[RMDB]
Chemical mapping of a 177-nucleotide RNA with DMS.
RNA sequence: GGGAACGACUCGAGUAGAGUCGAAAACACUGCGGCCGUCGUUGCUGCGGAGGCAAAAGCGCGGCAGGCCGCAGACGAGCAGGCGACGGCGCGCGCGGAGGCCGAGGCCUGCGAUGCCGCGCUCACGCCACAGAUUUGCGUUCGCGCAAAUCUGUGGAAAAGAAACAACAACAACAAC
Reactivity to DMS in 0.01 (KOAc 150mM, MgCl2 10mM, bicine 150mM(pH8.5), 24C), signal-to-noise 1, nucleotides 027 to 126: c030a280c050u000g000c000g000g000c000c020g000u020c020g010u020u000g030c000u020g000c200g010g000a110g010g000c040a030a060a150a120g020c020g000c010g000g010c010a090g030g040c000c000g000c070a000g020a030c070g000a180g020c130a040g010g000c000g040a240c110g000g010c000g020c030g010c040g000c020g000g010a050g010g000c000c060g010a140g020g010c020c000u000g000c020g000a040u000g050c020c000g000c010g010c000u000c230a230c080g010

Source: RMDB library OK2TRN, as collected in RNAgym. The DMS profile rests on 887 reads.